[RMDB]
RNA sequence: GGGAACGACUCGAGUAGAGUCGAAAACAAGCGGUCAAGCUUCGAAGAGAGCUCUAUCUCUCUGGAAAUAGCAGCGUUCACGCGCGUAUCCUCCACGGAGUAGUAGCAGAAGGACAUCCUCGAGGAUGCCGAGUUCCUGUCGAUAACUCCUGACCACUGAUAGAUAAACAUUCGUGUUUAUCUAUCAAAAAGAAACAACAACAACAAC
Reactivity to 2A3 in 0.01 (KOAc 150mM, MgCl2 10mM, bicine 150mM(pH8.5), 24C), signal-to-noise 9, nucleotides 027 to 156: c030a030a020g060c030g030g030u050c030a060a030g010c020u030u030c040g080a170a030g120a020g010a010g070c010u000c020u080a130u130c010u000c000u000c000u010g020g050a030a060a020u110a050g140c160a030g000c020g080u200u210c180a050c160g020c000g000c000g010u020a030u040c030c040u000c010c020a030c060g000g000a010g000u040a010g010u110a010g020c040a030g030a100a040g030g010a020c010a020u000c010c020u130c150g060a190g010g000a010u020g000c010c010g010a010g020u050u050c030c020u090g150u150c030g010a020u030a120a030c010u020c000c040u040g020a010c010c040a030c080
Reactivity to DMS in 0.01 (KOAc 150mM, MgCl2 10mM, bicine 150mM(pH8.5), 24C), signal-to-noise 6, nucleotides 027 to 156: c070a140a090g040c030g020g020u000c020a080a090g010c030u000u000c030g020a100a060g010a070g020a060g020c050u000c060u000a070u000c010u000c000u000c050u010g010g010a060a120a060u000a080g010c040a180g030c030g020u000u010c180a130c240g030c010g010c040g010u000a040u000c060c020u010c020c030a090c090g010g000a050g030u000a090g020u000a080g040c060a150g000a120a140g030g000a050c010a050u000c010c010u000c220g010a190g010g010a050u000g000c010c010g000a090g030u000u010c040c010u000g000u010c030g010a110u000a050a030c020u000c010c040u000g000a060c010c010a080c080